[RMDB]
RNA sequence: GGGAACGACUCGAGUAGAGUCGAAAAGGUAACUUCAGAGCUGACUGCGGUCUGAUCGGGCCAAUUGCCAACAUGAACCACAGGAACAGAGAUUGUUUUUUGACCCGCUUCACGAAUCGUUAAAGUACGAGUGAAGCCUAUUCGUAGGCUUCACUCGAAAAGAAACAACAACAACAAC
Reactivity to 2A3 in 0.01 (KOAc 150mM, MgCl2 10mM, bicine 150mM(pH8.5), 24C), signal-to-noise 1, nucleotides 027 to 126: g010g010u020a040a040c040u050u060c140a040g020a010g100c060u050g070a070c040u030g050c020g000g000u000c010u030g050a150u090c060g010g020g010c010c080a130a170u040u160g010c000c010a030a010c020a070u090g030a030a010c010c000a030c070a140g030g000a070a050c000a000g060a040g030a270u040u100g040u080u000u030u060u020u110g070a010c000c000c000g050c000u080u050c020a010c080g040a110a050u120c030g000u000u040a250a070a020g010u050a050
Reactivity to DMS in 0.01 (KOAc 150mM, MgCl2 10mM, bicine 150mM(pH8.5), 24C), signal-to-noise 1, nucleotides 027 to 126: g010g030u010a040a110c090u000u000c050a050g000a190g000c060u000g000a070c040u000g010c070g030g000u000c040u000g000a070u000c160g000g040g000c000c100a080a030u000u010g000c030c020a000a100c110a080u000g000a040a210c060c010a020c090a100g000g000a050a150c010a080g010a030g030a140u010u010g010u000u000u030u020u000u000g000a040c000c030c020g000c130u000u010c050a060c090g000a050a010u000c000g000u000u000a040a030a070g000u030a080